[RMDB]
Chemical mapping of a 207-nucleotide RNA with 2A3 and DMS. It was measured as part of the RMDB library M2RFPK. Reactivities are rounded to 0.1 and cut off at 0 and 3. For DMS, 5,379 sequencing reads were counted. The reactions ran in a buffer of 150 mM KOAc, 10 mM MgCl2 and 150 mM bicine (pH 8.5), at 24 C. For DMS the reverse transcriptase was MarathonRT. The 2A3 profile rests on 2,790 reads.
RNA sequence: GGGAACGACUCGAGUAGAGUCGAAAAUUGCGCCUCCGAUUCGCCGUCGGCAUUUCCCCAGCAGCCAUGACCUACCAGGCUGCGGUGCGGGUCGCCGCACAGGUCAUCCCUCAUCGGGCGCGUCCUGGAUAGGGCUAUACUUUCGAGUAUAGCCCAACUUAAUUACGCGUUUCGACGCGUAAUUAAGAAAAGAAACAACAACAACAAC
Reactivity to 2A3 in 0.01 (KOAc 150mM, MgCl2 10mM, bicine 150mM(pH8.5), 24C), signal-to-noise 4, nucleotides 027 to 156: u100u110g000c000g000c000c040u130c050c040g020a010u090u070c080g000c020c020g040u040c000g020g020c030a070u110u050u040c010c020c010c000a020g000c000a010g000c010c000a190u110g060a180c030c030u100a120c070c080a050g020g000c020u030g000c050g010g020u120g040c100g020g010g000u050c040g010c010c010g000c030a050c020a040g040g030u100c060a190u140c060c030c000u100c030a050u070c040g000g020g000c020g000c010g010u060c000c000u040g050g030a090u090a230g020g000g000c000u000a000u000a000c000u000u110u250c300g090a000g020u000a010u000a000g040c010c000c000a000a000
Reactivity to DMS in 0.01 (KOAc 150mM, MgCl2 10mM, bicine 150mM(pH8.5), 24C), signal-to-noise 2, nucleotides 027 to 156: u020u000g020c010g020c030c010u000c060c030g000a120u000u000c060g010c040c030g020u020c020g000g030c020a300u000u000u020c000c010c010c030a120g030c020a040g020c010c010a130u000g020a170c170c050u000a200c170c050a140g030g030c010u010g030c000g000g030u010g010c120g010g010g020u000c210g000c020c050g040c140a040c030a060g050g010u000c090a100u010c020c000c000u010c080a090u000c080g000g000g030c010g000c010g010u000c030c000u020g020g040a160u000a100g040g030g040c000u000a010u000a000c000u000u000u000c240g000a040g030u000a010u000a020g000c000c000c010a000a010